Structure probing data (DMS and 2A3) for a 177-nucleotide construct. 2A3 adducts were read by reverse transcription with SuperScript II with manganese.

RNA sequence: GGGAACGACUCGAGUAGAGUCGAAAACCAACCCGGUGGCCGACGUGGUGUACUACGGCGUCACGUUCGGCAUCCAGGCCGACAAGGACGGGCUGGUGCAAAGCUACAAGCCGGCGCAUUGGGACGAUCGAUACUCACGUUUCGACGUGAGUAUCGAAAAAGAAACAACAACAACAAC
Reactivity to DMS in 0.01 (KOAc 150mM, MgCl2 10mM, bicine 150mM(pH8.5), 24C), signal-to-noise 2, nucleotides 027 to 126: c010c010a210a180c040c020c010g080g040u000g010g000c010c010g000a010c000g000u000g000g000u000g030u000a100c130u010a110c200g000g010c010g010u000c000a030c020g000u000u000c100g000g030c010a020u000c110c070a040g010g010c000c010g010a080c080a160a160g030g030a110c010g010g000g010c010u000g000g040u000g000c050a070a080a100g010c100u010a110c190a110a110g040c030c000g000g000c050g040c020a040u010u000g000g030g000a130c190g000a160
Reactivity to 2A3 in 0.01 (KOAc 150mM, MgCl2 10mM, bicine 150mM(pH8.5), 24C), signal-to-noise 2, nucleotides 027 to 126: c010c010a000a050c030c000c010g010g050u030g040g010c030c000g010a010c030g000u010g030g000u060g010u040a100c050u000a030c110g140g020c010g010u000c000a000c040g060u110u040c040g020g000c000a000u030c000c010a000g060g060c000c000g050a060c100a160a130g170g020a060c000g000g000g060c010u010g000g000u020g000c000a100a120a040g010c000u100a110c090a170a030g010c030c000g010g040c100g010c030a020u000u020g030g020g000a060c070g080a060